[RMDB]
RNA sequence: GGGAACGACUCGAGUAGAGUCGAAAAGAAGAGAAGCGCGCGAAUUGGAAACCAGCGAACCUUAUUACGCGCGCAAGGAACCGGGCCUUGGUUCUUUGGAAAGAUUAGAUAAUUUCGCUGGUAAAGACAUAUAGUAUAUGUUCGCAUAUACUAUAUGAAAAGAAACAACAACAACAAC
Reactivity to DMS in 0.01 (KOAc 150mM, MgCl2 10mM, bicine 150mM(pH8.5), 24C), signal-to-noise 7, nucleotides 027 to 126: g000a140a140g010a190g010a120a220g000c000g010c000g010c010g010a080a080u020u010g000g000a130a110a060c000c000a000g010c010g000a010a050c070c030u010u020a030u010u000a100c030g010c010g020c010g000c010a010a010g000g000a020a010c010c000g010g010g020c100c090u020u020g000g000u000u000c000u000u000u020g010g010a110a070a090g000a110u030u020a080g010a080u030a060a070u030u000u000c000g010c000u000g000g000u030a030a070a090g010a250
Reactivity to 2A3 in 0.01 (KOAc 150mM, MgCl2 10mM, bicine 150mM(pH8.5), 24C), signal-to-noise 9, nucleotides 027 to 126: g090a060a030g090a000g030a130a030g040c000g000c000g000c010g020a020a030u050u030g040g040a070a100a120c000c000a000g000c000g000a020a040c010c010u060u080a040u060u110a110c000g000c000g000c000g000c000a000a000g000g000a000a000c010c000g060g230g050c040c060u090u110g020g000u000u000c000u010u010u030g050g040a110a080a020g060a060u130u230a050g070a110u150a110a120u060u060u020c000g000c000u000g000g010u020a020a030a010g050a000
The record gives the reactivity of an RNA of 177 nucleotides to DMS and 2A3. DMS adducts were read by reverse transcription with MarathonRT. The data come from the RNA Mapping Database (RMDB), library OK1LIB. The RNA was probed in 150 mM KOAc, 10 mM MgCl2 and 150 mM bicine (pH 8.5) at 24 C. For 2A3, 22,692 sequencing reads were counted.